[RMDB]
RNA sequence: GGGAACGACUCGAGUAGAGUCGAAAACUCACGACGUUCGCGUCGUGAGAAAUAAAUUCAGCGGUAAUUCGAGCGCAAAUAUUACCGCUGAUGCGCUCGUAAAAAGGGUAUCCUUCGGGAUACCCAAGCCUAUAGCACAGUUCGCUGUGCUAUAGGCAAAAGAAACAACAACAACAAC
Reactivity to DMS in 0.01 (KOAc 150mM, MgCl2 10mM, bicine 150mM(pH8.5), 24C), signal-to-noise 2, nucleotides 027 to 126: c000u000c000a030c030g010a010c000g010u010u010c200g030c020g050u000c000g030u010g000a010g010a000a020a060u000a060a080a070u020u000c000a000g000c020g010g000u000a010a010u000u000c130g000a110g010c210g010c100a120a030a110u010a060u000u000a020c000c000g000c000u000g010a010u000g020c140g020c010u010c050g000u020a070a040a070a130a100g000g000g020u000a000u010c000c010u010u000c130g050g000g000a000u000a000c000c000c000a000a020
Reactivity to 2A3 in 0.01 (KOAc 150mM, MgCl2 10mM, bicine 150mM(pH8.5), 24C), signal-to-noise 2, nucleotides 027 to 126: c000u000c010a000c020g010a000c010g000u020u120c240g030c010g100u000c000g020u000g000a000g000a000a030a000u090a020a080a030u040u020c040a010g000c000g000g010u020a020a010u080u120c090g050a080g060c130g010c180a080a150a010u160a030u050u040a030c000c010g000c000u020g010a000u010g000c050g020c040u060c080g100u140a010a010a000a040a090g020g010g000u000a000u010c000c000u010u030c190g090g000g000a010u000a000c000c000c000a000a010

Conditions: 150 mM KOAc, 10 mM MgCl2 and 150 mM bicine (pH 8.5), 24 C. Chemical mapping of a 177-nucleotide RNA with DMS and 2A3. Reactivities are given for positions 27 through 126. Values are in units of 0.01, from 0 to 300, in steps of 10. The data come from the RNA Mapping Database (RMDB), library M2PK50.